The data come from the RNA Mapping Database (RMDB), library OK3TST. Chemical mapping of a 207-nucleotide RNA with 2A3.
RNA sequence: GGGAACGACUCGAGUAGAGUCGAAAAACGACUUAAUGGCGAUGAUUGGCGAUCUACAAUAGCACACGAUGAAGUGUUCGGUACUAUGUAGGGUUCCGAAUAUUUUAAGAGUAAGUUUAAUCACCUGCUUAAAAUGGUCAGAGAAAGGCAUAGAGUGCGUAACCGGCGAGUUCGCUCGCCGGUUACGAAAAGAAACAACAACAACAAC
Reactivity to 2A3 in 0.01 (KOAc 150mM, MgCl2 10mM, bicine 150mM(pH8.5), 24C), signal-to-noise 1, nucleotides 027 to 156: a020c040g030a030c040u080u160a020a000u070g010g060c010g060a040u070g010a040u000u080g020g000c040g010a050u060c030u060a060c060a010a100u080a040g050c050a040c020a010c170g140a120u100g040a020a000g000u000g000u030u000c000g000g000u010a000c010u040a060u080g090u100a010g020g080g000u040u070c010c000g010a010a000u040a040u000u060u070u060a060a040g030a000g120u060a140a000g000u020u060u150a080a040u090c020a020c050c020u000g000c030u000u060a000a070a030a000u100g000g000u010c030a000g050a010g000a120a070a010g020g000c000a010u040a040g120a000g060u080g030

The 2A3 profile rests on 850 reads.